[RMDB]
An RNA of 177 nucleotides, treated with DMS and 2A3 and read out base by base.
The RNA was probed in 150 mM KOAc, 10 mM MgCl2 and 150 mM bicine (pH 8.5) at 24 C.
Source: RMDB libraries RFM100 and RFMREP, as collected in RNAgym.
RNA sequence: GGGAACGACUCGAGUAGAGUCGAAAACUAAACUGACCCACCCACAAUUUAUCCAAAAAAUUUAUCCACCUAACCCCAGAUCACUGCAAACGAAAUGUAUAUCACUAUUCACGCGUGGUUCCAAUUACUUGUAUUCUGAUUUCGAUCAGAAUACAAGAAAAGAAACAACAACAACAAC
Reactivity to DMS in 0.01 (KOAc 150mM, MgCl2 10mM, bicine 150mM(pH8.5), 24C), signal-to-noise 4, nucleotides 027 to 126: c080u040a020a110a110c070u000g010a120c010c020c020a080c030c010c020a060c080a100a040u000u010u020a040u000c050c100a000a050a070a040a080a080u000u000u030a080u030c040c020a010c020c020u010a080a100c020c000c020c050a070g010a040u010c020a030c070u000g010c050a060a050a090c120g000a050a080a110u010g000u000a020u020a040u010c060a030c040u000a100u010u000c030a030c070g000c040g020u000g010g010u010u010c010c020a070a030u020u010a080
Reactivity to 2A3 in 0.01 (KOAc 150mM, MgCl2 10mM, bicine 150mM(pH8.5), 24C), signal-to-noise 9, nucleotides 027 to 126: c020u080a080a000a080c040u060g080a050c010c010c000a020c010c030c000a060c030a090a080u090u120u150a100u130c040c040a060a050a030a030a030a050u110u160u070a070u060c010c010a030c010c010u030a050a060c010c010c000c000a010g010a050u020c010a010c040u040g010c020a030a100a070c050g090a090a060a060u080g040u050a040u040a010u110c010a010c060u070a100u080u090c040a020c070g050c030g020u040g030g000u050u020c000c010a020a020u130u060a080